[RMDB]
RNA sequence: GGGAACGACUCGAGUAGAGUCGAAAACUCUGCUUCGGCAGAGGUACAGGGGUCAUCGAACUCAUCCCAGGUGAGCAACAGCCUGAAGCCUCCACGGGACAUGCUCACCCAGGAUGUUGCGAUGACGGAGGCACCCACGAUCACAUUUCGAUGUGAAAUAUCCCUUUUAUUUCGAUAAAAGGGAUAUAAAAGAAACAACAACAACAAC
Reactivity to 2A3 in 0.01 (KOAc 150mM, MgCl2 10mM, bicine 150mM(pH8.5), 24C), signal-to-noise 5, nucleotides 027 to 156: c000u000c000u000g000c010u030u040c220g170g010c000a000g000a010g000g020u060a070c120a070g030g010g040g010u000c010a010u000c000g020a110a080c050u020c100a030u020c030c030c050a020g000g010u000g000a010g000c010a040a130c080a160g070c000c010u030g020a100a020g040c020c030u080c030c010a040c030g010g000g070a100c050a110u090g000c000u000c010a000c000c010c000a050g000g030a000u020g020u120u050g090c020g010a000u020g010a000c000g020g000a000g000g010c030a050c010c000c000a060c100g060a080u060c000a010c010a030u080u170u220c230g110a020u040g060u020g030a080a050
Reactivity to DMS in 0.01 (KOAc 150mM, MgCl2 10mM, bicine 150mM(pH8.5), 24C), signal-to-noise 3, nucleotides 027 to 156: c000u000c010u000g010c000u010u010c300g030g030c010a010g010a020g000g020u010a050c060a120g000g000g000g000u000c000a020u000c020g030a050a060c150u000c060a050u000c000c000c060a060g000g010u000g020a030g030c000a050a130c090a170g000c020c000u020g010a060a110g000c020c010u000c020c030a300c040g020g000g010a060c060a290u000g000c000u000c000a040c020c020c030a040g000g020a030u000g030u000u010g000c010g010a040u000g010a030c000g030g010a070g030g010c030a150c020c000c000a130c110g010a190u000c010a030c010a070u000u000u000c180g010a090u000g020u010g000a050a160
This 207-nucleotide RNA was probed chemically with 2A3 and DMS. The reactions ran in a buffer of 150 mM KOAc, 10 mM MgCl2 and 150 mM bicine (pH 8.5), at 24 C. Reactivities are given for positions 27 through 156. The 2A3 profile rests on 6,062 reads. Source: RMDB library RNAMAK, as collected in RNAgym. For 2A3 the reverse transcriptase was SuperScript II with manganese.